[RMDB]
RNA sequence: GGGAACGACUCGAGUAGAGUCGAAAAUCACUAAAGUUAUAGCGACGCAACACAUCAUUCACCAUGGUGUACCAUGAAUCAUUAUGCUCUUUCCAUCCUCUCUCACCGGUCCUGAUCAUCUCACGUCCGAUGUAAUAACAUUCGUGUUAUUACAUCGAAAAGAAACAACAACAACAAC
Reactivity to DMS in 0.01 (KOAc 150mM, MgCl2 10mM, bicine 150mM(pH8.5), 24C), signal-to-noise 9, nucleotides 027 to 126: u020c040a100c080u030a050a080a100g010u020u020a070u020a090g000c030g000a050c090g010c060a080a090c120a060c060a040u010c040a040u010u000c110a090c130c120a060u000g010g020u010g000u010a090c050c030a060u010g010a100a060u030c070a060u010u010a070u020g000c030u000c020u000u010u010c020c020a060u020c030c010u000c030u000c030u010c030a050c030c020g000g010u010c010c010u000g010a070u010c050a060u010c010u000c030a060c110g010u010c110
Reactivity to 2A3 in 0.01 (KOAc 150mM, MgCl2 10mM, bicine 150mM(pH8.5), 24C), signal-to-noise 9, nucleotides 027 to 126: u090c030a030c140u160a110a070a060g100u140u100a140u090a130g060c030g060a040c030g010c070a060a050c020a020c000a090u060c010a020u100u130c050a050c090c020a030u050g010g000u060g030u060a080c020c020a050u100g090a070a050u120c040a050u060u160a050u190g020c010u010c000u050u050u000c020c010a050u030c010c010u010c000u000c000u000c010a030c030c020g020g020u030c000c010u020g020a040u050c020a050u010c020u010c020a060c060g090u020c040